Record summary
The record gives the reactivity of an RNA of 177 nucleotides to 2A3 and DMS. 2A3 adducts were read by reverse transcription with SuperScript II with manganese. For DMS, 969 sequencing reads were counted.
RNA sequence: GGGAACGACUCGAGUAGAGUCGAAAAGAUAUGGAGCACUCAUUGUUCUCAUCGAUCGACACUCGGAAACGAGUGUCGGGAGAGACAAUGAGGUGCUCCUAAGUCAAAACAGCUGUUCGCAGCUGAAUCAUCAGCUGUUCUUCGGAACAGCUGAUGAAAAAGAAACAACAACAACAAC
Reactivity to 2A3 in 0.01 (KOAc 150mM, MgCl2 10mM, bicine 150mM(pH8.5), 24C), signal-to-noise 1, nucleotides 027 to 126: g000a000u070a040u240g000g000a000g000c010a010c020u020c010a000u060u000g210u300u040c050u010c010a300u300c020g120a230u060c030g000a000c000a000c010u000c010g000g040a070a090a040c010g010a010g010u020g000u010c000g000g000g000a020g000a000g010a000c000a000a000u000g020a040g020g000u000g000c010u000c020c020u010a000a000g000u000c010a000a000a210a260c010a010g000c010u030g070u130u180c300g000c280a010g000c020u060g080a000a130
Reactivity to DMS in 0.01 (KOAc 150mM, MgCl2 10mM, bicine 150mM(pH8.5), 24C), signal-to-noise 1, nucleotides 027 to 126: g000a040u010a300u010g000g000a030g000c010a070c000u010c000a020u000u000g040u000u010c000u020c020a300u000c140g000a050u010c000g010a000c000a000c000u000c010g000g000a080a130a270c000g040a000g000u000g000u010c000g000g000g010a040g030a010g010a010c000a000a020u030g000a000g010g010u030g010c000u040c000c000u020a000a090g010u010c030a120a050a150a150c020a010g000c000u010g000u030u020c300g070c090a030g000c000u000g010a070a100